[RMDB]
RNA sequence: GGGAACGACUCGAGUAGAGUCGAAAAGGCUGUUGAAAUACAUUCCUGUGCCGGCAAUACAGUGUGUAUGGAGGUCUCAAUGGCUCGGAAGUGCCAGCAAAGCGGCGUAGAUAUUAGCAGACGUAUGAUAGGAUGCAUCCGUUCGCGGAUGCAUCAACACUAUAUUGCCGUUCGCGGCAAUAUAGUGAAAAGAAACAACAACAACAAC
Reactivity to 2A3 in 0.01 (KOAc 150mM, MgCl2 10mM, bicine 150mM(pH8.5), 24C), signal-to-noise 3, nucleotides 027 to 156: g040g020c020u020g030u210u070g090a060a030a010u060a020c020a020u060u080c040c000u010g000u020g070c070c070g070g000c030a030a050u070a090c010a000g040u020g020u010g010u070a030u050g000g010a040g000g010u010c020u000c060a120a080u060g000g020c030u020c080g030g030a110a070g040u030g030c020c000a000g010c050a100a030a000g020c030g000g030c010g020u060a040g050a140u100a080u150u150a030g030c040a030g010a060c040g070u110a050u130g110a080u090a120g150g020a000u000g000c000a000u010c010c000g010u030u040c160g000c000g120g000a010u000g030c000a000u000c000a000a000
Reactivity to DMS in 0.01 (KOAc 150mM, MgCl2 10mM, bicine 150mM(pH8.5), 24C), signal-to-noise 2, nucleotides 027 to 156: g030g040c000u000g010u000u000g000a180a080a130u000a020c050a080u000u000c300c010u000g040u010g000c000c010g000g010c060a130a110u010a030c040a060g040u000g010u000g030u000a030u000g020g000a140g020g020u000c020u000c030a080a090u000g000g000c070u010c020g030g020a120a150g010u000g000c000c010a040g010c070a040a060a080g030c060g000g000c040g030u000a080g000a110u010a050u000u000a050g010c040a040g000a070c060g000u000a070u000g020a080u000a220g030g000a040u000g000c000a010u010c000c020g020u000u010c300g010c010g020g000a030u000g030c000a000u000c030a030a060